[RMDB]
RNA sequence: GGGAACGACUCGAGUAGAGUCGAAAACUCGCCUCAGGCCACCCUGCCCUGGCCGAAGCCAAGGCGCGCCGGACUCAUCCUGGCACCAACCUUCAUGGCGCCAUCCGGACGCGGUCGCGCGCGGCGAGAAACGGGGAGGAUUCGUCCUCCCCGUUUCAAAAGAAACAACAACAACAAC
Reactivity to DMS in 0.01 (KOAc 150mM, MgCl2 10mM, bicine 150mM(pH8.5), 24C), signal-to-noise 2, nucleotides 027 to 126: c000u000c010g000c000c010u020c120a190g010g010c000c040a040c090c030c050u010g000c060c030c050u010g000g010c010c040g000a110a160g010c020c050a070a160g010g000c010g020c020g000c020c090g010g010a080c180u010c100a120u010c070c070u000g010g020c000a020c000c010a030a100c210c060u010u010c110a170u000g000g000c040g010c010c010a090u000c080c040g000g000a100c060g020c080g000g010u010c050g010c120g040c040g030c120g000g030c020g000a060
Reactivity to 2A3 in 0.01 (KOAc 150mM, MgCl2 10mM, bicine 150mM(pH8.5), 24C), signal-to-noise 2, nucleotides 027 to 126: c000u000c020g000c010c000u060c100a050g000g060c040c000a050c040c040c050u100g040c020c000c030u000g030g010c000c020g140a160a000g000c020c010a100a070g070g010c000g010c010g000c010c020g120g010a030c030u010c120a140u110c070c040u060g000g040c040a010c000c010a010a220c010c030u270u180c100a140u080g000g000c020g010c040c010a070u020c040c040g040g040a100c020g030c020g050g020u080c020g030c010g040c000g010c040g040g020c000g020a040
Structure probing data (DMS and 2A3) for a 177-nucleotide construct. DMS adducts were read by reverse transcription with MarathonRT. For 2A3 the reverse transcriptase was SuperScript II with manganese. Conditions: 150 mM KOAc, 10 mM MgCl2 and 150 mM bicine (pH 8.5), 24 C.